[RMDB]
An RNA of 207 nucleotides, treated with DMS and 2A3 and read out base by base.
Reactivities are given for positions 27 through 156.
Conditions: 150 mM KOAc, 10 mM MgCl2 and 150 mM bicine (pH 8.5), 24 C.
For DMS, 1,904 sequencing reads were counted.
The data come from the RNA Mapping Database (RMDB), library RNAMAK.
RNA sequence: GGGAACGACUCGAGUAGAGUCGAAAACGCUGGGAGUCGUAACUUGUAUGAGGGAGCUGAAGCGCGCACGGCGAAGAACUCAUAUACAAGGAGAAGACUCCUGUGCUGAAGCGCGCACGGCAACCGAAAGGUGCGGGUACCCAGGUUCGCCUGGGAAAGAAACUUGCUUAUUCGUAAGCAAGUUUCUAAAAGAAACAACAACAACAAC
Reactivity to DMS in 0.01 (KOAc 150mM, MgCl2 10mM, bicine 150mM(pH8.5), 24C), signal-to-noise 1, nucleotides 027 to 156: c060g000c000u010g020g000g000a030g010u000c000g010u000a090a300c020u000u000g000u000a040u000g020a080g040g000g060a090g060c020u000g000a060a060g050c000g010c030g000c000a300c060g000g010c000g020a070a090g000a160a230c000u000c010a070u000a130u020a080c080a060a090g030g020a130g000a060a300g000a030c000u000c010c000u000g070u020g000c020u020g050a070a090g010c060g020c020g020c010a300c070g010g060c020a130a140c030c020g020a140a050a140g000g020u000g000c060g000g000g000u000a130c000c000c000a060g000g000u000u000c200g030c010c000u020g000g020g010a030a060
Reactivity to 2A3 in 0.01 (KOAc 150mM, MgCl2 10mM, bicine 150mM(pH8.5), 24C), signal-to-noise 2, nucleotides 027 to 156: c030g000c030u000g020g010g000a000g010u010c020g020u030a080a190c020u000u070g000u020a040u110g020a000g000g010g020a020g000c000u040g030a180a050g020c000g000c000g030c010a020c040g000g020c010g030a110a010g010a060a010c010u010c010a040u120a010u020a190c050a020a030g060g020a050g060a100a030g000a030c000u010c000c000u000g000u010g000c020u050g010a120a050g000c020g000c000g000c020a020c010g030g010c040a040a080c000c010g060a060a030a010g040g000u030g000c000g030g020g060u130a090c010c000c000a010g020g000u030u060c200g090c020c000u010g000g060g000a020a190